[RMDB]
RNA sequence: GGGAACGACUCGAGUAGAGUCGAAAACAUGUACCCUUCGGGGUACAUGAACAUAACGCGGGCGUGGGACACCGCCGGAGCUAGCGUCAGAUAGUCCCAGUAUUAGGUGCGCCUUCGGGCGCACCAAGCUACUAUAAUGAUUCGUCAUUAUAGUAGCAAAAGAAACAACAACAACAAC
Reactivity to 2A3 in 0.01 (KOAc 150mM, MgCl2 10mM, bicine 150mM(pH8.5), 24C), signal-to-noise 3, nucleotides 027 to 126: c000a000u010g010u000a010c000c000c000u010u050c260g040g000g000g000u010a000c000a000u000g000a010a010c010a090u140a060a030c040g010c010g020g010g010c070g080u100g030g020g020a030c030a030c080c010g030c000c010g050g000a050g030c090u130a050g050c010g100u040c020a030g020a220u110a060g040u010c000c000c010a000g060u050a190u170u240a040g000g020u000g010c030g000c030c000u040u090c270g080g000g000c020g000c000a000c000c010a000a000
Reactivity to DMS in 0.01 (KOAc 150mM, MgCl2 10mM, bicine 150mM(pH8.5), 24C), signal-to-noise 3, nucleotides 027 to 126: c000a010u000g020u010a000c000c010c000u000u020c200g030g010g020g010u000a000c000a000u000g000a080a100c100a110u010a070a060c110g010c010g000g000g000c040g030u010g000g000g000a100c120a120c130c030g000c010c030g000g010a150g010c090u010a110g020c040g010u000c100a040g000a090u010a120g000u000c000c000c000a160g010u000a080u010u020a130g010g040u010g000c000g000c000c020u000u000c170g020g000g010c040g000c000a000c000c000a000a050
The record gives the reactivity of an RNA of 177 nucleotides to 2A3 and DMS. The reactions ran in a buffer of 150 mM KOAc, 10 mM MgCl2 and 150 mM bicine (pH 8.5), at 24 C. The 2A3 profile rests on 5,950 reads. The data come from the RNA Mapping Database (RMDB), library M2PK50. High 2A3 reactivity points to a flexible backbone, as in loops and unpaired stretches. For DMS the reverse transcriptase was MarathonRT.